Notes: An RNA of 177 nucleotides, treated with 2A3 and DMS and read out base by base. It was measured as part of the RMDB library TTRDEL. The reactions ran in a buffer of 150 mM KOAc, 10 mM MgCl2 and 150 mM bicine (pH 8.5), at 24 C.

[RMDB]
RNA sequence: GGGAACGACUCGAGUAGAGUCGAAAAGAUAUGGACCGACUUCGAUAAGCUGAAUGUCGGAAACGACAUCCAGCUUUUGACGAAGGGGUCCUAAGUCAAAAGUAGCGGUUCUUCGGAACCGCUACAAGAUUAUUACAUUCUUCGGAAUGUAAUAAUCAAAAGAAACAACAACAACAAC
Reactivity to 2A3 in 0.01 (KOAc 150mM, MgCl2 10mM, bicine 150mM(pH8.5), 24C), signal-to-noise 2, nucleotides 027 to 126: g010a010u040a020u090g010g010a000c020c030g220a300c140u020u000c010g080a110u040a280a040g000c000u000g000a040a000u010g000u000c000g000g000a020a000a000c010g010a000c000a000u020c020c000a020g000c020u020u010u010u060g060a020c000g010a000a010g020g010g030g020u000c000c000u010a060a010g040u030c030a020a070a030a190g000u000a010g010c010g040g000u010u000c020u050u100c240g080g000a010a010c010c000g020c000u000a000c010a000a000
Reactivity to DMS in 0.01 (KOAc 150mM, MgCl2 10mM, bicine 150mM(pH8.5), 24C), signal-to-noise 4, nucleotides 027 to 126: g010a030u000a300u010g000g000a000c000c000g020a140c000u000u000c000g010a150u000a020a020g020c000u000g010a020a000u000g010u000c000g020g000a030a040a110c000g010a020c000a010u000c010c010a010g010c000u010u000u000u000g000a170c070g010a010a020g000g010g000g020u000c000c000u000a000a060g000u000c020a080a090a150a160g010u000a000g020c000g000g010u000u000c000u010u020c180g030g000a020a010c000c000g000c000u000a000c000a030a050